[RMDB]
RNA sequence: GGGAACGACUCGAGUAGAGUCGAAAAGGAGCUCGAGUUGUUCUUAGCUCAACUAAGGGCAACUGUAUGUUCUUAAGCUGUUUAAGGGCAUAUAGUAUUGUGUAGUUGAGCUACACAGUAUUAAUAGGUUAUAAACAGCUUAUGGCCUGUUCGAGCAUGCUAGGGCAUUAUUCGUAAUGCCCUAGCAAAAAGAAACAACAACAACAAC
Reactivity to 2A3 in 0.01 (KOAc 150mM, MgCl2 10mM, bicine 150mM(pH8.5), 24C), signal-to-noise 1, nucleotides 027 to 156: g100g020a050g010c000u000c000g000a000g000u000u000g000u000u000c000u000u020a000g000c000u000c080a020a100c030u010a010a080g120g020g000c020a030a040c010u020g010u030a030u000g000u020u000c030u020u000a050a040g000c050u040g080u170u030u030a030a030g000g010g000c050a000u000a000u010a040g010u030a150u020u060g020u010g000u000a000g020u010u080g020a000g000c000u000a000c000a000c000a000g120u120a060u050u140a160a070u030a030g000g050u030u060a030u020a050a080a010c060a000g060c000u030u000a010u020g020g010c000c030u060g080u070u130c060g010a080g030c060a080
This 207-nucleotide RNA was probed chemically with 2A3. Reactivities are rounded to 0.1 and cut off at 0 and 3. The data come from the RNA Mapping Database (RMDB), library OK3TST. Conditions: 150 mM KOAc, 10 mM MgCl2 and 150 mM bicine (pH 8.5), 24 C. The 2A3 profile rests on 816 reads.